Chemical mapping of a 177-nucleotide RNA with 2A3 and DMS. DMS adducts were read by reverse transcription with MarathonRT. Conditions: 150 mM KOAc, 10 mM MgCl2 and 150 mM bicine (pH 8.5), 24 C.

RNA sequence: GGGAACGACUCGAGUAGAGUCGAAAAAGCAAGACUGAAAGCUGGGAAGGACUAAUAGUGGACUGACAUGUCAACUGUCCCUCUUUUUGCUGAGAGUAUUCUUGUGGUAAAAGGUUAGUGGGGGAGGGCCUCAUAUGCAGUUCGCUGCAUAUGAGGCAAAAGAAACAACAACAACAAC
Reactivity to 2A3 in 0.01 (KOAc 150mM, MgCl2 10mM, bicine 150mM(pH8.5), 24C), signal-to-noise 1, nucleotides 027 to 126: a020g020c020a000a000g020a010c000u050g030a160a000a010g000c010u010g000g000g020a040a000g000g000a000c020u110a040a270u120a300g050u030g020g020a000c010u030g120a080c080a170u240g010u000c020a010a000c020u030g000u000c000c050c000u010c000u000u070u030u110u130g000c030u060g040a040g000a000g120u070a140u090u050c020u000u020g000u040g040g000u060a030a070a000a040g070g030u150u110a030g020u110g020g000g000g000g040a120g010g070
Reactivity to DMS in 0.01 (KOAc 150mM, MgCl2 10mM, bicine 150mM(pH8.5), 24C), signal-to-noise 2, nucleotides 027 to 126: a160g040c040a040a010g010a040c050u000g000a110a170a020g000c020u010g000g000g000a030a040g000g000a050c020u020a080a110u000a040g010u000g000g000a010c010u000g040a110c270a070u000g010u020c000a040a030c030u010g000u000c000c000c040u000c000u000u000u000u010u010g000c000u000g000a240g010a050g010u020a090u020u000c010u000u010g040u000g010g000u000a060a040a060a120g000g000u000u000a070g010u000g000g000g010g010g000a170g000g010